[RMDB]
RNA sequence: GGGAACGACUCGAGUAGAGUCGAAAACCGGAAUGGUUCCGCCGUGAUCGGGCCAUGCAAUAGUUGCCAACGACAACUAUGCUCCGGUUGCUCAGGCAGCGUAACGCUGCUUGAAAGACCACAUGGAUUAGCGCGACAUUGUUCGCAAUGUCGCGAACAUGCUUUAGACCUUCGGGUCUAAAGCAUGAAAAGAAACAACAACAACAAC
Reactivity to 2A3 in 0.01 (KOAc 150mM, MgCl2 10mM, bicine 150mM(pH8.5), 24C), signal-to-noise 4, nucleotides 027 to 156: c000c000g000g000a100a100u070g000g040u300u300c010c040g030c030c100g170u250g040a240u110c010g000g000g000c000c000a020u030g010c050a070a300u000a000g000u000u010g000c040c070a170a040c150g070a100c000a010a000c000u000a000u000g010c030u040c030c020g000g020u000u040g000c010u000c010a000g000g000c000a000g000c020g100u170a120a050c300g000c000u000g000c000u000u000g010a000a000a000g030a000c040c020a020c070a230u180g110g020a150u150u140a040g070c000g000c000g020a000c000a000u000u010g030u040u060c120g020c090a000a000u000g000u000c000g000c000g000a000a000
Reactivity to DMS in 0.01 (KOAc 150mM, MgCl2 10mM, bicine 150mM(pH8.5), 24C), signal-to-noise 2, nucleotides 027 to 156: c010c030g020g040a080a040u020g010g000u000u000c000c000g020c070c090g010u020g010a090u010c020g020g040g000c020c010a040u010g010c060a170a050u000a020g010u000u000g000c010c040a140a210c200g000a140c000a000a020c000u000a010u000g010c110u020c020c020g000g000u000u020g030c200u000c000a040g000g000c000a020g010c000g030u000a160a100c150g040c000u000g000c000u000u000g000a020a050a110g010a160c010c010a060c080a160u000g010g010a250u000u000a130g010c000g020c000g040a040c010a010u000u010g030u010u000c300g020c060a000a010u000g020u000c020g000c000g000a010a050